Chemical mapping of a 177-nucleotide RNA with DMS and 2A3. The data come from the RNA Mapping Database (RMDB), libraries RFM100 and RFMREP. DMS (dimethyl sulfate) methylates the pairing face of unpaired adenines and cytosines.

[RMDB]
RNA sequence: GGGAACGACUCGAGUAGAGUCGAAAAGAAAGAAAGAAAUUAGCUCGCCAGUUAGCGAGGUCUGUCCCCACACGACAGAUAAUCGGGUGCAACUCCCGCCCCUUUUCCGAGGGUCAUCGGAACCAAAUAUCUGAGAACAAUUCGUUGUUCUCAGAUAAAAAGAAACAACAACAACAAC
Reactivity to DMS in 0.01 (KOAc 150mM, MgCl2 10mM, bicine 150mM(pH8.5), 24C), signal-to-noise 8, nucleotides 027 to 126: g000a110a120a100g000a120a080a100g020a040a060a060u040u020a270g000c000u000c010g000c000c030a180g040u010u010a030g010c000g000a020g010g000u000c010u000g020u000c000c050c040c100a080c230a100c240g010a010c000a020g010a030u000a060a060u010c010g000g010g020u000g000c050a060a300c040u010c000c000c000g000c010c000c000c040u010u010u000u010c000c000g000a010g010g000g010u000c030a010u010c030g000g010a000a040c300c210a040a020a110
Reactivity to 2A3 in 0.01 (KOAc 150mM, MgCl2 10mM, bicine 150mM(pH8.5), 24C), signal-to-noise 9, nucleotides 027 to 126: g070a010a050a010g130a030a110a010g100a040a140a040u160u090a080g020c000u000c010g010c010c030a130g120u140u140a010g020c000g000a010g000g010u000c000u000g010u010c020c030c030c000a030c000a010c040g010a000c000a000g030a030u050a060a050u090c000g010g000g000u010g010c010a010a010c010u010c010c000c010g010c000c000c000c000u110u180u050u000c000c000g010a010g000g000g050u070c020a010u010c000g000g010a000a000c030c010a080a120a020